Chemical mapping of a 207-nucleotide RNA with 2A3.
The reactions ran in a buffer of 150 mM KOAc, 10 mM MgCl2 and 150 mM bicine (pH 8.5), at 24 C.
For 2A3, 2,172 sequencing reads were counted.
It was measured as part of the RMDB library OK3TST.

RNA sequence: GGGAACGACUCGAGUAGAGUCGAAAAAGCGUGUGUGUCAGCCCAGCACUUGCUGCGUGGGAGGUGCAUUCCGGACGGACGCGUAUGGUCAGGUGUAGCAGUGUUAGUUCUUUGAGUCGGUACACUUCAGGGCGCAUGUUCCAGAGGGUAGCAAGGGCAUCAUAGUGACGUUCGCGUUAUUGUGAUGAAAAGAAACAACAACAACAAC
Reactivity to 2A3 in 0.01 (KOAc 150mM, MgCl2 10mM, bicine 150mM(pH8.5), 24C), signal-to-noise 1, nucleotides 027 to 156: a000g050c020g000u040g000u020g010u010g010u030c020a000g060c010c000c000a020g000c030a010c000u060u150g060c030u020g020c020g150u060g020g000g000a040g030g030u010g030c040a080u180u000c020c010g000g010a020c040g000g040a020c030g030c050g030u050a030u120g060g020u060c040a030g000g030u010g020u030a020g010c040a020g000u000g010u020u080a060g010u070u040c040u110u090u190g030a030g010u040c050g000g000u090a080c100a030c000u100u200c070a000g000g080g000c010g000c120a090u260g040u150u000c000c000a010g000a000g040g030g020u000a020g000c030a040a030g000g020g020